[RMDB]
RNA sequence: GGGAACGACUCGAGUAGAGUCGAAAAACAGCCGGAUACGUCCGGCUCAACGGGGGAUACGUGUGGUGCCGUCCGCUCCCCCUAUGGCAUAACAAAUGCACCACACACUAGGCUACGGCCUAGUGAAAAAAGGUGUAUGUGUUCGCACAUACACCAACUUACGUUUCUAGUUCGCUAGAAACGUAAGAAAAGAAACAACAACAACAAC
Reactivity to DMS in 0.01 (KOAc 150mM, MgCl2 10mM, bicine 150mM(pH8.5), 24C), signal-to-noise 2, nucleotides 027 to 156: a090c030a060g010c000c000g000g020a070u000a060c180g000u010c000c010g030g000c000u000c040a050a080c130g020g000g020g050g030a100u000a050c040g060u000g010u010g010g030u000g020c000c030g000u010c070c010g000c090u010c010c010c010c010c000u000a020u010g010g000c140a160u000a090a120c100a060a060a100u000g000c020a020c000c030a050c010a250c000a030c000u010a000g020g010c000u010a110c300g120g020c000c000u000a000g010u010g000a000a020a060a060a050a070g030g060u040g020u000a010u000g020u000g020u000u000c300g030c020a000c000a020u000a020c000a010c000c010a020a010
Reactivity to 2A3 in 0.01 (KOAc 150mM, MgCl2 10mM, bicine 150mM(pH8.5), 24C), signal-to-noise 4, nucleotides 027 to 156: a000c010a000g000c000c000g000g000a020u050a080c200g100u020c000c000g000g000c010u020c010a030a020c020g000g000g000g000g000a020u020a100c020g010u030g000u000g040g000u000g010c020c010g030u040c030c070g080c050u030c000c000c000c000c020u050a150u140g110g000c070a110u110a300a050c070a080a080a020u080g000c000a000c010c000a000c000a000c000a000c000u000a000g010g000c000u020a010c290g080g000c000c000u000a000g000u000g010a060a000a000a000a000a020g000g000u000g010u000a010u000g020u000g010u010u060c150g000c080a000c000a010u000a000c000a000c000c000a000a000